[RMDB]
RNA sequence: GGGAACGACUCGAGUAGAGUCGAAAAUUUUGUUCUAAGAAGUGUAAUAAGUAGUCUGGGCUACCUGUUUUAGCGUCCGUACCUGACAUUUUGAAACCACCAAAUGGAUGGUAUCCAACAACUGCUGCAAUAGAAUAAGCUUCGGCUUAUUCUAUUGAAAAGAAACAACAACAACAAC
Reactivity to 2A3 in 0.01 (KOAc 150mM, MgCl2 10mM, bicine 150mM(pH8.5), 24C), signal-to-noise 2, nucleotides 027 to 126: u050u070u020u100g040u040u070c020u050a140a070g040a100a030g120u060g030u100a070a150u070a280a040g080u060a020g020u060c050u070g020g000g090c000u050a090c040c000u080g070u120u160u010u070a020g010c020g020u000c030c040g000u030a030c000c010u000g010a020c020a030u040u080u000u140g100a110a060a060c040c020a030c030c040a060a120a080u100g040g000a020u000g010g000u040a000u020c040c020a010a050c010a010a040c050u070g040c040u060g030
Reactivity to DMS in 0.01 (KOAc 150mM, MgCl2 10mM, bicine 150mM(pH8.5), 24C), signal-to-noise 6, nucleotides 027 to 126: u000u000u010u010g010u000u000c040u010a090a110g010a110a080g010u000g010u010a060a110u010a070a070g000u000a050g010u000c040u000g010g010g010c030u000a050c130c070u000g020u010u010u010u010a070g030c050g020u000c060c050g010u000a020c020c020u000g000a210c030a040u010u000u010u000g010a070a090a120c090c070a060c110c050a050a070a070u000g010g010a130u000g000g010u000a120u000c070c080a050a070c120a050a050c080u010g010c100u010g010
The data come from the RNA Mapping Database (RMDB), library OK2TRN. Structure probing data (2A3 and DMS) for a 177-nucleotide construct. The DMS profile rests on 5,390 reads. Conditions: 150 mM KOAc, 10 mM MgCl2 and 150 mM bicine (pH 8.5), 24 C. For 2A3, 1,882 sequencing reads were counted.